[RMDB]
RNA sequence: GGGAACGACUCGAGUAGAGUCGAAAACAACUUCGAAUUUAGGCAAGGCGUUGCGGCUGUAAACUUGUGAGUCGUGAUGCUUCAUAACGAACAAUAUUUGGGCUACUUACACAAGCUUCAAAGCCUGCUCCUCCGAAGCAGAGCCUGCCCACAAAGGGGGUGGAUAUGCAUUCGUGCAUAUCCACCCAAAAGAAACAACAACAACAAC
Reactivity to 2A3 in 0.01 (KOAc 150mM, MgCl2 10mM, bicine 150mM(pH8.5), 24C), signal-to-noise 1, nucleotides 027 to 156: c020a000a070c100u020u000c010g300a300a230u110u100u030a220g200g000c090a050a030g010g000c000g000u000u000g000c010g010g000c050u050g090u300a100a180a260c220u070u170g050u070g230a010g020u000c050g050u080g000a060u070g000c020u050u020c000a020u100a070a020c080g080a000a000c130a100a060u120a080u090u050u070g010g000g000c000u020a030c000u110u290a010c020a000c060a110a000g030c000u060u120c040a000a090a010g000c020c000u000g000c000u080c000c040u020c000c000g140a130a000g000c040a000g000a000g000c010c000u000g000c000c060c000a080c200a000a060a250g150g000